[RMDB]
RNA sequence: GGGAACGACUCGAGUAGAGUCGAAAAGAAUAGUCAGUAAAUGGGUGUACUCGCAUGAGAAUGUGAGUAUUAUGACCUACUGACUACGGUAUGUAUCGUCAUUACCCAUUUACACUAAGAUGCAUACGGUAGUGUAACAUUUCGAUGUUACGCUACCAAAAGAAACAACAACAACAAC
Reactivity to 2A3 in 0.01 (KOAc 150mM, MgCl2 10mM, bicine 150mM(pH8.5), 24C), signal-to-noise 9, nucleotides 027 to 126: g080a030a060u060a020g040u070c110a010g010u040a020a080a130u110g020g000g000u040g010u010a000c000u000c000g000c000a000u020g040a030g060a220a010u000g000u000g000a000g000u000a000u010u080a020u030g060a020c000c010u010a010c010u050g060a030c010u020a030c070g060g000u010a010u040g010u010a020u040c040g070u030c070a060u020u140a070c000c000c010a010u060u070u080a050c090a010c030u060a070a030g050a060u070g030c030a040u050a050c030
Reactivity to DMS in 0.01 (KOAc 150mM, MgCl2 10mM, bicine 150mM(pH8.5), 24C), signal-to-noise 9, nucleotides 027 to 126: g020a140a140u010a020g010u000c070a060g010u010a020a040a060u020g000g010g020u010g020u000a000c000u010c000g020c010a010u000g000a220g010a160a010u000g010u010g000a010g000u000a000u010u030a040u020g000a100c030c050u000a020c000u000g000a050c030u010a040c210g030g000u000a040u010g010u000a010u000c160g000u010c100a070u010u040a080c000c000c000a070u000u010u020a040c120a100c120u020a050a060g000a050u010g000c090a050u020a040c120